[RMDB]
RNA sequence: GGGAACGACUCGAGUAGAGUCGAAAAGAUAUGGAGAGAUCACCCGGAGUAUACUCGCGAUAAGAAGCGAUCGGAAACGAUCGGCUUCUUUUGACGCGAGAUACUCCGGGUGAUCUCUCCUAAGUCACUAAGGACUACAGUUCGCUGUAGUCCUUAGAAAAGAAACAACAACAACAAC
Reactivity to DMS in 0.01 (KOAc 150mM, MgCl2 10mM, bicine 150mM(pH8.5), 24C), signal-to-noise 1, nucleotides 027 to 126: g000a040u010a300u020g000g000a020g000a040g000a020u000c010a010c000c000c000g010g000a060g000u010a000u000a130c000u010c020g010c000g030a180u000a040a010g020a000a020g030c010g000a010u000c010g010g000a130a110a250c000g030a010u010c020g040g020c000u010u000c000u000u000u000u000g020a200c050g030c010g000a020g010a020u000a000c000u000c000c000g010g000g010u010g000a000u000c000u000c000u000c000c000u000a000a060g010u000c030a200
This 177-nucleotide RNA was probed chemically with DMS. For DMS, 1,874 sequencing reads were counted. The RNA was probed in 150 mM KOAc, 10 mM MgCl2 and 150 mM bicine (pH 8.5) at 24 C. It was measured as part of the RMDB library TTRINS.